[RMDB]
RNA sequence: GGGAACGACUCGAGUAGAGUCGAAAAUGGCGUCUCCUGGGCGAUCGCUCGCUGUUUUUGUGGCUGGCUUUCAGCGGGCUGGAGGAGCCGGGAGCGGAGGCGGAGGACCGAGCCAAAAACGUCAGCCUAUAGAGGAAGCUGUUCGCAGCUUCCUCAAACUUAAUUCGCAGUUCGCUGCGAAUUAAGUAAAAGAAACAACAACAACAAC
Reactivity to 2A3 in 0.01 (KOAc 150mM, MgCl2 10mM, bicine 150mM(pH8.5), 24C), signal-to-noise 1, nucleotides 027 to 156: u080g020g020c000g010u040c010u020c020c050u180g100g000g010c010g090a110u130c050g000c010u000c020g020c000u020g070u050u040u020u080u130g120u080g010g000c000u010g000g030c050u000u050u030c010a000g000c000g000g000g020c010u050g100g090a170g040g050a040g020c000c030g010g010g000a010g000c040g010g010a060g020g050c120g020g050a090g020g020a010c030c040g000a010g000c040c060a030a010a030a020a000c080g030u030c000a000g000c000c010u060a150u120a060g010a000g000g010a010a000g000c000u000g050u070u200c250g040c050a000g000c000u000u020c010c010u010c000a000a000
Structure probing data (2A3) for a 207-nucleotide construct. 2A3 adducts were read by reverse transcription with SuperScript II with manganese. Conditions: 150 mM KOAc, 10 mM MgCl2 and 150 mM bicine (pH 8.5), 24 C.